This 177-nucleotide RNA was probed chemically with DMS and 2A3. Values cover nucleotides 27 to 126. Values are in units of 0.01, from 0 to 300, in steps of 10.
[RMDB]
RNA sequence: GGGAACGACUCGAGUAGAGUCGAAAAGUGGGUGGGGCGGGGGCCCUCACCCAGUCGAGGAUGCUCAACUUCGCGAACGAUACCGAGGUGCUCGCCGGGACCGUGCUCUCCACCAUCCAGGCCACGAAGUACAUGCUUUGUUCGCAAAGCAUGUACUAAAAGAAACAACAACAACAAC
Reactivity to DMS in 0.01 (KOAc 150mM, MgCl2 10mM, bicine 150mM(pH8.5), 24C), signal-to-noise 1, nucleotides 027 to 126: g020u020g000g000g080u000g000g000g020g000c130g000g000g000g000g000c130c000c010u000c040a030c020c000c020a000g010u000c030g060a170g010g010a080u010g000c030u010c090a130a180c130u000u000c050g030c060g000a060a080c070g050a140u010a070c160c050g000a090g000g010u000g000c040u010c020g020c030c040g000g020g010a120c060c070g000u000g010c030u040c040u030c030c030a110c030c020a020u000c020c000a040g000g010c010c040a110c190g010a130
Reactivity to 2A3 in 0.01 (KOAc 150mM, MgCl2 10mM, bicine 150mM(pH8.5), 24C), signal-to-noise 1, nucleotides 027 to 126: g130u000g000g010g000u000g000g000g000g000c110g030g030g000g030g000c000c010c000u000c000a030c000c010c050a020g040u020c000g010a000g040g040a060u160g170c020u010c060a060a070c070u110u050c040g020c030g150a240a020c060g020a050u070a070c070c050g000a000g020g000u040g090c020u030c000g000c000c000g030g000g010a030c040c040g030u070g040c010u020c010u040c020c000a030c000c010a030u030c000c010a020g020g080c030c010a070c050g090a040